[RMDB]
RNA sequence: GGGAACGACUCGAGUAGAGUCGAAAAGCAAAUAUUGUCUUAAUUACUUAGGCUAACAGAAAUAAGUAUUAAAGCGGGACAAGGCAUCGACAUUUGAUACAAAUAUUGAUCAAUGGAUGUCUUAUUUAAACCUCAUCCGGCUUCGGCCGGAUGAGAACAGCACUUAUCUCUUCGGAGAUAAGUGCUGAAAAGAAACAACAACAACAAC
Reactivity to 2A3 in 0.01 (KOAc 150mM, MgCl2 10mM, bicine 150mM(pH8.5), 24C), signal-to-noise 1, nucleotides 027 to 156: g020c010a050a070a000u160a140u160u170g020u000c010u050u070a140a110u150u000a080c020u000u150a000g120g000c010u040a130a010c020a070g060a000a180a030u020a050a000g030u000a000u020u080a150a050a020g050c060g080g050g000a070c080a010a000g020g020c010a000u010c010g220a160c010a040u000u020u300g020a010u140a100c050a060a240a000u200a120u190u300g010a010u020c000a000a000u010g020g010a000u000g030u010c010u000u020a000u000u020u000a000a100a000c010c000u000c000a000u000c020c010g000g000c000u050u020c060g080g000c010c000g020g000a000u000g000a000g000a000a000